[RMDB]
RNA sequence: GGGAACGACUCGAGUAGAGUCGAAAAGAUAUGGAUAUCUACCCACCCGACCAUUGGCGAAGAACCCUUUUUACGUCGGAAACGACGUAAAAAGGGGGAGCCAACAUUUCGGAGGAUAUCCUAAGUCCAUUAGUAAGACGUUCGCGUCUUACUAAUGAAAAGAAACAACAACAACAAC
Reactivity to 2A3 in 0.01 (KOAc 150mM, MgCl2 10mM, bicine 150mM(pH8.5), 24C), signal-to-noise 2, nucleotides 027 to 126: g070a110u280a270u300g000g000a010u000a020u000c010u150a300c030c010c020a020c000c010c010g040a070c000c090a090u000u010g000g000c000g130a300a020g010a030a040c010c010c020u000u000u000u000u000a000c000g010u000c000g040g000a060a120a030c000g010a000c000g010u010a000a000a000a000a010g030g020g010g000g000a000g010c010c020a000a010c010a130u200u250u060c020g000g000a020g000g020a000u000a010u010c000c010u030a120a020g190u110c090
Reactivity to DMS in 0.01 (KOAc 150mM, MgCl2 10mM, bicine 150mM(pH8.5), 24C), signal-to-noise 5, nucleotides 027 to 126: g000a210u010a120u000g000g000a030u000a010u000c000u000a190c040c010c010a300c150c000c010g000a010c300c300a210u000u000g000g010c000g000a110a170g010a170a160c000c000c000u000u000u000u000u000a010c010g000u010c000g000g010a130a080a210c000g010a010c000g030u000a000a000a000a000a000g000g000g000g000g010a110g010c010c000a010a010c180a300u010u010u000c020g000g000a130g020g000a000u000a000u000c000c000u010a070a080g010u000c080
The record gives the reactivity of an RNA of 177 nucleotides to 2A3 and DMS.
The reactions ran in a buffer of 150 mM KOAc, 10 mM MgCl2 and 150 mM bicine (pH 8.5), at 24 C.
Values cover nucleotides 27 to 126.
DMS adducts were read by reverse transcription with MarathonRT.
For 2A3 the reverse transcriptase was SuperScript II with manganese.
Source: RMDB library TTRINS, as collected in RNAgym.
The DMS profile rests on 3,432 reads.